Description: The data come from the RNA Mapping Database (RMDB), library OK1LIB. Structure probing data (2A3 and DMS) for a 177-nucleotide construct. For DMS, 8,094 sequencing reads were counted. The reactions ran in a buffer of 150 mM KOAc, 10 mM MgCl2 and 150 mM bicine (pH 8.5), at 24 C. For DMS the reverse transcriptase was MarathonRT.
[RMDB]
RNA sequence: GGGAACGACUCGAGUAGAGUCGAAAAGAAAGCUCGGUUUUCUCGUCGUCACGAGUACGAAAAGCGUGGAAGUACGAGUGACGGUAGUUUUCUACCGACGAGGAUCCACGCUGUUUUACGAGCGAAAGGGUUAGUGAUAGUUCGCUAUCACUAACCCAAAAGAAACAACAACAACAAC
Reactivity to 2A3 in 0.01 (KOAc 150mM, MgCl2 10mM, bicine 150mM(pH8.5), 24C), signal-to-noise 3, nucleotides 027 to 126: g110a020a050a000g010c000u000c000g080g040u070u040u070u050c000u010c000g140u010c020g040u020c000a020c090g040a040g040u100a040c060g040a110a060a000a060g010c010g020u010g010g040a160a110g060u150a090c020g000a010g040u040g100a020c000g000g000u000a000g020u000u050u130u140c010u000a000c000c020g010a010c010g040a030g060g020a080u000c010c000a010c010g010c000u000g020u000u070u010u050a020c020g000a000g030c010g040a210a010a020
Reactivity to DMS in 0.01 (KOAc 150mM, MgCl2 10mM, bicine 150mM(pH8.5), 24C), signal-to-noise 4, nucleotides 027 to 126: g000a080a070a190g020c010u000c010g020g010u010u010u010u010c000u000c000g000u000c230g010u050c110a170c100g010a110g020u040a090c130g000a020a040a050a010g020c000g040u000g000g010a040a100g010u040a120c020g000a300g000u020g000a130c020g000g030u000a000g000u020u010u020u020c000u020a010c010c000g000a100c010g010a300g010g010a120u020c000c000a010c010g000c020u000g000u000u000u000u010a130c000g000a010g000c000g010a070a090a050